Conditions: 150 mM KOAc, 10 mM MgCl2 and 150 mM bicine (pH 8.5), 24 C. The record gives the reactivity of an RNA of 207 nucleotides to DMS and 2A3. For DMS, 1,859 sequencing reads were counted.
RNA sequence: GGGAACGACUCGAGUAGAGUCGAAAAGUUAGGUGGGGCUCCUAUGCAAACACAGGCCACUGCCCAAAAAUGUCCAAAGACGCCAAUGGGUAGAACAGGGAUUGUCGGAUUAAGGCUUUCCAUAAUGAAAACAAAGUAUGCUUCGGCAUACUUUGAAGAUAGUUAUUCCCUUCGGGGAAUAACUAUCAAAAGAAACAACAACAACAAC
Reactivity to DMS in 0.01 (KOAc 150mM, MgCl2 10mM, bicine 150mM(pH8.5), 24C), signal-to-noise 1, nucleotides 027 to 156: g010u010u000a050g010g020u000g000g000g000g020c050u000c020c040u000a060u000g000c100a120a110a150c010a070c020a140g000g000c020c010a030c010u000g050c010c000c000a000a020a130a110a050u000g010u020c000c040a110a140a260g000a100c040g010c080c050a050a180u000g010g000g000u010a000g000a080a160c050a130g030g010g010a140u010u000g020u000c040g000g000a160u000u000a060a110g000g000c050u000u010u000c000c020a120u010a080a050u000g000a110a100a060a270c030a040a010a000g000u000a020u000g000c000u000u000c300g050g010c020a010u000a020c000u000u000u000g010a030a110
Reactivity to 2A3 in 0.01 (KOAc 150mM, MgCl2 10mM, bicine 150mM(pH8.5), 24C), signal-to-noise 2, nucleotides 027 to 156: g060u050u070a030g030g030u010g020g000g010g010c030u070c030c060u060a010u100g050c040a090a150a080c050a030c030a070g050g030c040c000a050c020u020g000c000c000c020a020a020a000a000a000u030g000u010c030c020a130a090a160g030a000c010g000c020c010a010a050u040g000g000g000u030a020g000a070a060c040a030g000g000g050a030u010u050g040u030c040g030g070a080u180u100a090a020g010g020c000u020u050u010c040c010a060u130a160a160u240g100a100a040a000a010c000a000a000a000g000u000a000u000g000c010u030u050c110g090g000c000a000u000a000c000u000u000u000g000a010a000
Reactivities are given for positions 27 through 156.
The data come from the RNA Mapping Database (RMDB), library M2RFPK.